[RMDB]
RNA sequence: GGGAACGACUCGAGUAGAGUCGAAAACUUUAUAAACGGCACUUCCUGCGUGUCCAUGCCCGCGGGCCUGGUCUUGUCAUAGUGCUGACAUUUGUAGUUCCUUGACUUUCGUUCUCUGCCAGUGACGCAACUUUCCUAUGUUCGCAUAGGAAAGUUGAAAAGAAACAACAACAACAAC
Reactivity to DMS in 0.01 (KOAc 150mM, MgCl2 10mM, bicine 150mM(pH8.5), 24C), signal-to-noise 2, nucleotides 027 to 126: c070u000u000u010a060u020a050a080a140c070g010g000c010a010c010u000u000c000c010u000g010c070g020u000g000u000c000c020a010u010g000c000c010c050g020c300g030g000g020c020c060u000g000g000u000c010u000u000g010u000c010a030u000a010g020u000g020c020u000g010a060c130a090u000u000u020g040u000a050g020u000u000c050c040u000u000g020a060c080u000u020u010c040g010u010u000c030u000c010u010g000c060c040a040g000u000g000a160c220g000
Reactivity to 2A3 in 0.01 (KOAc 150mM, MgCl2 10mM, bicine 150mM(pH8.5), 24C), signal-to-noise 2, nucleotides 027 to 126: c020u180u140u060a130u110a060a110a040c030g010g000c000a000c020u020u060c030c010u020g000c030g020u060g000u000c020c000a000u010g000c030c020c010g050c200g050g010g000c000c020u010g020g030u000c010u030u130g010u010c010a010u090a130g000u000g000c010u000g030a020c010a150u050u080u130g090u060a040g010u020u050c000c000u020u060g070a040c000u040u150u100c000g030u030u050c000u010c010u000g060c000c030a120g030u060g080a020c030g000